[RMDB]
RNA sequence: GGGAACGACUCGAGUAGAGUCGAAAAAAGGGAAUGGUAAUGGGGCUUUUUUCACUGUAUUUGGUCACCAUGAUGGUGGUCUGGCGGGAGGUGGGCAUGCCGGCGCCGCUGGCCACGCGCGGGACUUGGAUGUGAAACAGCAUCUUCCCUGUGGUCACUUCACAAUAACAUUCGUGUUAUUGUGAAGAAAAGAAACAACAACAACAAC
Reactivity to 2A3 in 0.01 (KOAc 150mM, MgCl2 10mM, bicine 150mM(pH8.5), 24C), signal-to-noise 3, nucleotides 027 to 156: a020a000g030g010g010a060a000u110g030g010u160a040a050u110g020g010g030g090c080u070u020u010u020u030u080c050a060c060u110g070u150a170u060u120u120g020g020u070c050a080c170c030a050u100g090a140u160g150g000u010g000g010u040c020u040g010g000c020g030g020g010a040g020g030u100g010g060g030c050a030u140g020c020c000g070g020c080g050c010c010g000c010u010g000g000c000c000a000c000g020c000g000c010g000g000g000a010c040u070u130g060g000a020u020g010u010g010a080a050a010c030a040g090c010a020u000c000u030u010c010c000c000u030g010u000g000g020u030c010a010
Reactivity to DMS in 0.01 (KOAc 150mM, MgCl2 10mM, bicine 150mM(pH8.5), 24C), signal-to-noise 2, nucleotides 027 to 156: a070a020g010g020g000a050a040u000g010g010u010a060a190u000g030g120g020g010c030u000u010u000u000u000u000c030a040c030u010g010u000a100u000u000u000g020g010u000c010a100c000c020a110u060g010a120u010g050g030u000g030g000u000c000u020g000g000c010g030g020g030a140g000g040u000g060g030g000c140a060u000g010c000c010g010g040c060g000c010c010g000c030u000g010g000c010c030a020c000g010c070g010c130g000g000g020a040c210u000u000g000g000a090u010g000u000g000a130a060a110c280a150g020c010a030u010c010u000u000c010c000c010u000g050u000g040g010u010c040a140
Structure probing data (2A3 and DMS) for a 207-nucleotide construct. Values are in units of 0.01, from 0 to 300, in steps of 10. Conditions: 150 mM KOAc, 10 mM MgCl2 and 150 mM bicine (pH 8.5), 24 C. The 2A3 profile rests on 2,424 reads. It was measured as part of the RMDB library OK3TST.